[RMDB]
RNA sequence: GGGAACGACUCGAGUAGAGUCGAAAAUAUGAAAGAUAUGGACGAAUUCUGAUUGUCAGAUUAUUCUCAUCGGAAACGAUGAUUAGAAUCUUGGAUUUAUCAGAGAUUCGUCCUAAGUCCACAAAAACAUGAUCUACUUCUUCGGAAGUAGAUCAUGAAAAGAAACAACAACAACAAC
Reactivity to 2A3 in 0.01 (KOAc 150mM, MgCl2 10mM, bicine 150mM(pH8.5), 24C), signal-to-noise 2, nucleotides 027 to 126: u300a150u130g080a130a160a000g110a020u160a060u300g000g020a000c010g000a000a020u020u000c000u000g010a000u000u020g020u050c000a010g000a030u000u040a030u100u000c000u000c000a000u030c010g010g020a030a050a060c000g000a010u020g020a000u000u020a010g030a030a000u020c010u050u200g230g000a090u280u300u240a040u080c000a010g050a020g000a050u010u000c010g000u020c000c000u000a010a000g000u000c020c000a130c090a040a140a000a000a000
Reactivity to DMS in 0.01 (KOAc 150mM, MgCl2 10mM, bicine 150mM(pH8.5), 24C), signal-to-noise 2, nucleotides 027 to 126: u020a130u030g010a110a120a090g000a090u010a300u000g000g000a020c010g010a020a000u000u000c000u010g000a020u000u010g000u000c000a040g000a020u000u000a060u000u000c040u000c000a000u010c000g000g000a120a160a300c010g030a000u000g000a020u000u000a000g000a040a010u000c010u010u010g030g000a030u000u000u000a010u000c000a010g000a050g010a030u010u000c000g010u000c000c000u000a020a060g010u000c010c050a140c220a070a080a090a120a160

Source: RMDB library TTRDES, as collected in RNAgym. Chemical mapping of a 177-nucleotide RNA with 2A3 and DMS. For 2A3 the reverse transcriptase was SuperScript II with manganese. DMS adducts were read by reverse transcription with MarathonRT. The reactions ran in a buffer of 150 mM KOAc, 10 mM MgCl2 and 150 mM bicine (pH 8.5), at 24 C.